[RMDB]
RNA sequence: GGGAACGACUCGAGUAGAGUCGAAAAGAUAUGGAAGUUUCAUCGCUCAAUGAUGCUGAUUCGGAAACGAAUCAGUUGAGAGCAGAUGAGAACUUCCUAAGUCAAAACACCUCGUUCGCGAGGUGAACUGUUGUUCUCGGUUCGCCGAGAACAACAGAAAAGAAACAACAACAACAAC
Reactivity to 2A3 in 0.01 (KOAc 150mM, MgCl2 10mM, bicine 150mM(pH8.5), 24C), signal-to-noise 1, nucleotides 027 to 126: g000a020u060a040u190g020g000a030a020g000u000u030u040c020a010u020c000g010c030u020c020a200a300u250g090a030u100g000c000u000g000a000u030u000c020g010g030a080a070a070c010g030a000a010u020c000a000g000u050u030g000a000g000a010g060c100a040g040a000u040g010a050g040a000a000c000u000u060c000c000u000a070a000g030u020c040a000a000a170a170c000a000c000c010u050c000g050u010u090c300g000c000g120a000g000g000u020g030a030a000
Reactivity to DMS in 0.01 (KOAc 150mM, MgCl2 10mM, bicine 150mM(pH8.5), 24C), signal-to-noise 1, nucleotides 027 to 126: g010a030u000a300u000g000g040a020a000g030u000u000u000c010a010u000c020g020c000u010c000a220a260u000g000a150u010g000c000u010g000a010u000u000c000g020g000a030a090a150c040g000a020a000u000c000a000g030u000u020g010a060g020a010g000c000a040g060a000u010g000a080g000a010a000c000u000u010c000c000u000a010a060g010u000c010a080a100a200a300c020a020c000c050u010c000g040u000u040c290g020c080g010a020g000g000u000g010a060a180